[RMDB]
RNA sequence: GGGAACGACUCGAGUAGAGUCGAAAACGAAGAGGAAAGAAGGACGCGAGACGGUGAACCUGUGAGUGGAAGCCCGCUUUAUUCACUGGGGUCGACAGCUCUGGGGAGAAAAGGGAGGAUCGGAUGGUAAGCCCCUUCUUCGGAAGGGGCAAAAGAAACAACAACAACAAC
Reactivity to DMS in 0.01 (KOAc 150mM, MgCl2 10mM, bicine 150mM(pH8.5), 24C), signal-to-noise 4, nucleotides 027 to 129: c250g010a050a030g040a100g030g010a040a020a050g020a030a030g030g010a090c080g060c160g030a070g060a080c160g050g070u030g010a060a040c080c040u070g070u030g040a070g050u010g020g040a000a000g000c060c040c150g000c080u020u030u030a060u050u010c060a000c080u050g000g020g000g040u010c070g050a130c150a000g070c050u050c040u060g040g030g020g020a100g030a010a050a090a060g040g000g020a000g000g020a040u010c050g080g000a070u060g020g000u030a060a160
Reactivity to 2A3 in 0.01 (KOAc 150mM, MgCl2 10mM, bicine 150mM(pH8.5), 24C), signal-to-noise 3, nucleotides 027 to 129: c070g000a030a010g090a000g010g040a040a020a020g030a010a050g040g000a000c000g030c060g030a000g010a030c040g000g000u080g050a020a010c000c020u060g030u020g080a020g010u020g020g020a060a000g010c030c010c000g090c000u020u080u080a080u090u090c070a010c110u060g000g000g000g010u030c000g010a020c050a020g000c000u000c030u010g000g000g000g000a030g030a050a080a000a010g050g020g010a020g020g020a020u020c030g010g030a050u060g030g010u090a030a000

Structure probing data (DMS and 2A3) for a 170-nucleotide construct.
The DMS profile rests on 6,618 reads.
Conditions: 150 mM KOAc, 10 mM MgCl2 and 150 mM bicine (pH 8.5), 24 C.
It was measured as part of the RMDB library 15KLIB.